[RMDB]
RNA sequence: GGGAACGACUCGAGUAGAGUCGAAAAUAUUCCGGUGUGGGAUACUUGGUAAUAUGUAACGCUAAUUGCAUAAGAUUGUAGGACGGAAUUUACAGUCUUGGUUAUUAUAAACCUGAAACUAAGUAAGAAUAGUAAGAGCGGUUCGCCGCUCUUACAAGUACGUUCUUUACUUCGGUAAAGAACGUACAAAAGAAACAACAACAACAAC
Reactivity to 2A3 in 0.01 (KOAc 150mM, MgCl2 10mM, bicine 150mM(pH8.5), 24C), signal-to-noise 3, nucleotides 027 to 156: u080a020u020u010c020c000g080g070u210g040u130g080g120g030a040u010a060c010u010u030g020g000u010a000a000u010a020u040g030u020a060a010c090g010c230u120a120a100u160u050g010c010a020u020a030a000g000a020u010u000g010u020a010g020g090a010c020g000g000a010a000u020u000u080a000c010a000g000u000c000u000u010g010g020u020u040a070u160u090a070u170a070a110a000c000c000u000g010a020a000a000c020u020a020a010g010u010a060a030g050a180a100u130a120g000u000a000a000g000a000g000c010g000g020u010u060c180g000c040c000g000c010u000c000u000u000a000c010a000a000
Reactivity to DMS in 0.01 (KOAc 150mM, MgCl2 10mM, bicine 150mM(pH8.5), 24C), signal-to-noise 1, nucleotides 027 to 156: u010a150u000u000c030c000g040g000u010g010u010g030g010g020a210u000a000c010u010u010g010g010u000a070a090u000a000u010g010u010a020a080c110g000c170u000a080a100u000u000g040c020a040u000a000a030g000a010u000u010g000u000a030g040g000a170c040g020g020a060a300u000u000u010a040c010a020g000u000c000u000u000g000g020u000u000a120u000u000a170u000a070a040a040c000c010u000g000a110a040a000c000u000a020a050g000u000a000a170g020a080a120u010a100g000u000a000a020g000a030g030c010g000g050u000u030c260g020c000c000g010c010u010c000u000u000a010c000a050a270